[RMDB]
RNA sequence: GGGAACGACUCGAGUAGAGUCGAAAAUGCCGGGCGGGAGGGACGAGGUCGGGGAAGGGGAGACCCCGAGGAGGAUCUCCAGCUAAAGAGUGGAGGAAAUCUCGGAAAGCUUCCCCCAAGAAGAACUGUGCCUACCUCUUCGGAGGUAGGAAAAGAAACAACAACAACAAC
Reactivity to 2A3 in 0.01 (KOAc 150mM, MgCl2 10mM, bicine 150mM(pH8.5), 24C), signal-to-noise 5, nucleotides 027 to 129: u130g030c020c020g010g020g110c180g010g000g070a180g040g020g000a000c050g040a040g060g010u050c020g000g000g000g030a010a070g070g010g000g000a010g020a020c000c000c000c020g000a010g020g030a010g000g020a020u020c000u000c000c020a070g040c040u100a080a100a030g150a070g080u060g000g000a000g000g020a050a040a020u020c020u000c020g010g010a050a020a000g010c000u000u000c000c000c000c000c010a050a020g040a060a000g020a050a030c060u090g020u050g080

An RNA of 170 nucleotides, treated with 2A3 and read out base by base. The reactions ran in a buffer of 150 mM KOAc, 10 mM MgCl2 and 150 mM bicine (pH 8.5), at 24 C. For 2A3, 14,206 sequencing reads were counted. Values are in units of 0.01, from 0 to 300, in steps of 10.